[RMDB]
RNA sequence: GGGAACGACUCGAGUAGAGUCGAAAAGGGUAUGUAAUAGUCUCAACUGUACUUUGGAUAAAGAAAAUAGUCAUAUUUAGUUUGUGUUGGUCCAGCCUUUUGGCAGAAAGGUACCUAAGGCUGAGUAUAAGCUCAUAUCUUAUUUCAUAACAUGUACAUCGUACGUUAUUUUCGAAUAACGUACGAUAAAAGAAACAACAACAACAAC
Reactivity to 2A3 in 0.01 (KOAc 150mM, MgCl2 10mM, bicine 150mM(pH8.5), 24C), signal-to-noise 8, nucleotides 027 to 156: g060g010g000u100a050u100g040u060a070a110u070a160g040u030c020u000c080a080a110c040u060g040u090a030c010u060u100u100g050g010a060u110a110a150a050g080a050a100a040a050u100a050g040u040c020a040u030a090u100u100u050a050g030u020u030u120g040u010g020u010u060g020g010u020c020c010a010g000c020c000u030u080u100u070g020g000c010a010g090a050a090a010g050g020u090a030c010c000u010a010a000g030g000c000u000g010a020g040u050a050u020a100a020g000c010u010c070a050u040a060u080c040u050u100a110u070u090u040c050a040u080a160a070c030a080u150g050u150a020c010
Reactivity to DMS in 0.01 (KOAc 150mM, MgCl2 10mM, bicine 150mM(pH8.5), 24C), signal-to-noise 3, nucleotides 027 to 156: g020g010g000u000a040u000g020u000a080a120u000a120g020u010c040u000c040a060a080c040u010g000u010a080c050u000u010u010g020g020a120u000a060a140a150g000a060a070a080a090u000a110g000u000c050a090u000a080u000u000u000a080g010u000u010u000g030u000g020u000u000g010g010u000c050c030a090g010c000c010u000u000u010u000g020g000c040a080g000a090a060a080g020g010u010a060c030c030u010a040a060g010g030c030u000g020a080g030u010a070u000a060a060g010c070u000c100a070u000a090u010c020u000u000a080u010u010u000c040a080u000a070a120c090a080u000g010u000a080c130